[RMDB]
RNA sequence: GGGAACGACUCGAGUAGAGUCGAAAAAAAGGCUGCGAACCACUAGAGGGGUGCUAGACAUUGAUGCUACGUGGUCGCAUUUCAGUCAGGGCCGCCGUAAUUAGCUAUGUGCACUUCAGGUUGCUGGAAUUAUUAACAAUUUCGAUUGUUAAUAAUUAAAAGAAACAACAACAACAAC
Reactivity to DMS in 0.01 (KOAc 150mM, MgCl2 10mM, bicine 150mM(pH8.5), 24C), signal-to-noise 8, nucleotides 027 to 126: a050a060a060g020g010c070u010g010c020g010a060a070c020c010a050c040u010a040g010a080g000g010g000g010u010g000c030u020a060g010a130c080a060u010u010g010a120u060g010c020u010a030c130g010u010g000g000u000c040g000c030a070u010u010u020c090a080g010u010c050a070g000g000g010c010c020g000c030c020g000u020a040a060u020u010a080g010c050u000a050u020g020u010g010c040a050c050u010u020c060a100g010g000u000u010g000c010u000g010g010
Reactivity to 2A3 in 0.01 (KOAc 150mM, MgCl2 10mM, bicine 150mM(pH8.5), 24C), signal-to-noise 7, nucleotides 027 to 126: a000a000a000g070g000c050u050g000c020g020a080a060c010c010a010c030u030a010g030a060g120g090g010g010u030g010c030u060a050g050a130c020a060u080u190g070a070u190g060c010u010a020c070g050u040g020g010u010c010g000c020a010u030u070u100c040a030g030u020c040a020g040g010g000c000c010g010c010c000g010u020a040a150u080u070a040g010c030u050a040u180g060u060g020c020a010c000u050u060c040a030g100g000u050u040g010c020u030g020g020